The data come from the RNA Mapping Database (RMDB), library M2PK50. Chemical mapping of a 177-nucleotide RNA with DMS and 2A3. For DMS, 2,719 sequencing reads were counted. Reactivities are rounded to 0.1 and cut off at 0 and 3.
RNA sequence: GGGAACGACUCGAGUAGAGUCGAAAACACUGAGUCUUCGGACUCAGUGAAAAGCUCGAAAAGGACCAAAACGAGCAUUAACAUAAAUAAAGGUCCAAAUAAAAAGUCUAGCGUUCGCGCUAGACAACAGAUAUUUAAUGUUCGCAUUAAAUAUCUGAAAAGAAACAACAACAACAAC
Reactivity to DMS in 0.01 (KOAc 150mM, MgCl2 10mM, bicine 150mM(pH8.5), 24C), signal-to-noise 3, nucleotides 027 to 126: c000a010c000u000g010a010g010u000c000u000u010c260g010g010a010c000u000c000a000g000u000g000a050a060a200a140g020c000u000c010g000a050a050a100a100g020g000a000c010c010a060a060a070a050c000g000a010g000c000a130u000u000a090a090c120a020u000a020a020a020u000a030a020a180g000g010u000c000c010a120a100a100u000a040a070a110a110a090g010u000c000u000a010g000c000g020u000u020c230g020c000g010c000u000a000g000a000c000a030a080
Reactivity to 2A3 in 0.01 (KOAc 150mM, MgCl2 10mM, bicine 150mM(pH8.5), 24C), signal-to-noise 3, nucleotides 027 to 126: c010a000c000u010g010a000g000u020c010u030u100c200g010g020a000c000u000c000a000g000u000g000a000a000a000a020g000c010u000c010g020a020a030a060a160g010g000a010c020c020a060a040a050a070c020g000a010g050c010a000u060u150a080a040c030a030u080a080a030a030u230a050a050a020g000g000u000c000c010a000a060a000u040a010a060a010a010a000g000u000c000u000a010g000c000g010u030u040c280g000c010g000c080u000a000g000a000c000a000a000